[RMDB]
RNA sequence: GGGAACGACUCGAGUAGAGUCGAAAAUGCUGCGGGAAGUACGACUUUAGUUGCUACUUCUAAUUUAGUUGCUCCAAGUCCAUAGGCACCUUCUCGAAUUUUAUUUGGUACAGAUGCCAUUGCAUCCACAAAGAUCUUCGUUCGCGAAGAUCUUUGUAAAAGAAACAACAACAACAAC
Reactivity to DMS in 0.01 (KOAc 150mM, MgCl2 10mM, bicine 150mM(pH8.5), 24C), signal-to-noise 2, nucleotides 027 to 126: u000g000c030u000g030c150g000g010g000a020a020g000u000a050c000g000a000c010u000u000u000a090g030u000u000g010c300u000a020c040u000u000c030u000a020a090u000u010u000a060g010u000u000g000c040u000c040c050a080a210g000u000c020c020a040u000a110g000g030c040a060c030c050u000u000c100u000c030g030a040a070u000u020u000u000a090u020u010u000g030g010u020a090c220a120g000a030u000g010c010c080a160u000u000g020c070a050u000c010c160
Structure probing data (DMS) for a 177-nucleotide construct. It was measured as part of the RMDB library OK2TST. Reactivities are given for positions 27 through 126. Conditions: 150 mM KOAc, 10 mM MgCl2 and 150 mM bicine (pH 8.5), 24 C.